[RMDB]
RNA sequence: GGGAACGACUCGAGUAGAGUCGAAAAGGUUCCGGCUAAAGAUUACGACGCUUGCGUUACCAUGCGCCGCGUACUUGAAAACAUACCGGAACACAACGCUUGCAUGAAUAGCCCAACAGCACAACGCGAGCUAUCAAUUUUCGGAUCUAUUAAAGGCCAUGUAGAGCCGUUUCGACGGCUCUACAUGAAAAGAAACAACAACAACAAC
Reactivity to 2A3 in 0.01 (KOAc 150mM, MgCl2 10mM, bicine 150mM(pH8.5), 24C), signal-to-noise 1, nucleotides 027 to 156: g040g010u000u010c000c020g000g000c050u110a140a030a060g070a100u160u070a130c110g020a040c000g110c020u140u240g010c020g020u020u050a260c010c060a090u300g010c050g010c010c020g000c000g000u020a110c020u060u160g100a050a000a040a040c050a070u130a060c000c020g010g000a020a020c050a000c000a080a060c050g020c020u060u180g000c050a050u080g010a210a080u090a100g000c000c070c010a090a110c100a060g060c000a030c060a130a000c090g000c010g020a010g060c020u100a010u160c120a110a200u050u080u070u150c000g050g030a040u000c020u030a150u220u270a180a160a050g060g030c000